[RMDB]
RNA sequence: GGGAACGACUCGAGUAGAGUCGAAAAUUGCUGACGUAGUAAAGGAACAAGUCUCAGACUUGCUUGUUAAAUUACUGCGUGGAAUGCCGAUUCCAGAUUUUGAUUUAGACGAUUUUAUUGACGCACCAGAGCUAAGGGUUCGCCCUUAGCAAAAGAAACAACAACAACAAC
Reactivity to DMS in 0.01 (KOAc 150mM, MgCl2 10mM, bicine 150mM(pH8.5), 24C), signal-to-noise 9, nucleotides 027 to 129: u000u030g030c050u010g020a060c020g000u000a020g000u000a000a000a010g010g040a050a040c020a000a000g010u000c120u020c150a130g020a100c150u070u030g000c020u000u000g010u000u000a040a060a040u020u000a000c020u020g020c000g040u020g000g030a040a030u040g020c040c050g000a120u010u010c000c010a080g000a120u010u000u020u010g050a070u020u020u000a100g030a080c080g000a060u000u010u010u020a090u010u000g030a090c100g000c100a090c080c060a070g010a140
Reactivity to 2A3 in 0.01 (KOAc 150mM, MgCl2 10mM, bicine 150mM(pH8.5), 24C), signal-to-noise 9, nucleotides 027 to 129: u080u090g030c020u050g050a010c010g000u000a000g000u000a000a020a030g140g050a040a000c000a010a000g060u020c070u060c210a100g060a200c060u090u080g000c010u010u020g020u030u040a050a120a040u010u010a010c000u000g000c000g000u000g020g020a060a030u090g070c030c030g040a050u050u000c010c010a020g030a110u080u090u060u140g120a140u060u090u130a070g020a090c070g010a040u000u040u060u080a170u080u150g030a040c040g000c020a020c020c030a020g030a020